[RMDB]
RNA sequence: GGGAACGACUCGAGUAGAGUCGAAAAAGUGCAAAGAAUUCGGCUCGGAGAAUUACCUUCUGAAGCUCACGACGGAGCUAACGAAAACUACUGGUGUCAUAUGCGGGGCCGCGUACGGGUACUUGCAUACUAGAGCGAGAUUCGUCUCGCUCUAGUAAAAAGAAACAACAACAACAAC
Reactivity to DMS in 0.01 (KOAc 150mM, MgCl2 10mM, bicine 150mM(pH8.5), 24C), signal-to-noise 2, nucleotides 027 to 126: a120g010u000g020c060a000a040a100g030a130a190u010u000c030g010g020c020u000c010g000g000a140g000a160a070u000u000a060c090c040u000u000c040u000g010a300a040g020c000u000c040a080c170g020a090c260g000g000a040g010c010u000a030a220c170g000a010a040a060a120c170u000a040c090u000g010g000u000g000u010c100a060u000a120u010g020c040g000g000g000g000c040c010g000c110g000u020a040c140g010g000g020u000a040c030u020u000g000c030a150
Reactivity to 2A3 in 0.01 (KOAc 150mM, MgCl2 10mM, bicine 150mM(pH8.5), 24C), signal-to-noise 1, nucleotides 027 to 126: a000g070u040g010c010a010a000a120g050a020a230u100u040c010g000g010c030u040c060g040g000a050g040a090a140u200u080a090c030c000u030u050c000u020g040a040a010g000c000u000c000a030c080g300a040c050g120g020a000g000c050u010a020a020c010g060a000a040a050a080c070u100a050c020u060g060g000u020g060u020c010a030u070a040u190g140c030g050g020g000g020c000c010g020c020g070u050a070c070g020g010g000u050a070c040u010u050g020c030a040
An RNA of 177 nucleotides, treated with DMS and 2A3 and read out base by base. Conditions: 150 mM KOAc, 10 mM MgCl2 and 150 mM bicine (pH 8.5), 24 C. Source: RMDB library OK2TST, as collected in RNAgym. For 2A3 the reverse transcriptase was SuperScript II with manganese.